[RMDB]
RNA sequence: GGGAACGACUCGAGUAGAGUCGAAAAAAAAAGGACCUACAGCCGAGCGAGUGACUGAAAACGGCAAAGUCACGAAGGAUCGUUAUACCUAAAUGGUCGUAGCGAAAUAAGAGUUGUUCCCAGUAAAUGUUUAACUUAGGUUCGCCUAAGUUAAACAAAAAGAAACAACAACAACAAC
Reactivity to 2A3 in 0.01 (KOAc 150mM, MgCl2 10mM, bicine 150mM(pH8.5), 24C), signal-to-noise 2, nucleotides 027 to 126: a010a000a000a030a020g120g010a010c000c000u000a000c010a010g000c000c000g060a050g080c140g070a060g050u000g000a000c010u050g110a100a080a080a090c060g120g000c080a140a050a000g000u000c000a000c010g000a070a030g050g010a060u020c000g010u000u000a020u010a020c010c010u120a280a250a180u190g020g000u070c080g000u040a000g020c010g040a060a000a110u170a120a030g000a010g020u010u020g000u010u000c000c000c000a000g000u010a000a020a030
Reactivity to DMS in 0.01 (KOAc 150mM, MgCl2 10mM, bicine 150mM(pH8.5), 24C), signal-to-noise 2, nucleotides 027 to 126: a040a050a060a080a090g020g000a030c030c000u000a010c020a230g030c040c030g000a050g020c200g020a120g020u000g010a020c020u000g020a060a060a080a060c140g000g010c080a050a090a030g020u030c010a030c010g010a060a100g000g000a120u000c000g010u000u000a020u000a030c010c000u000a050a100a110u000g000g010u000c100g050u000a020g000c000g020a040a060a090u010a130a150g000a020g000u000u000g000u000u000c000c000c010a070g000u010a060a040a070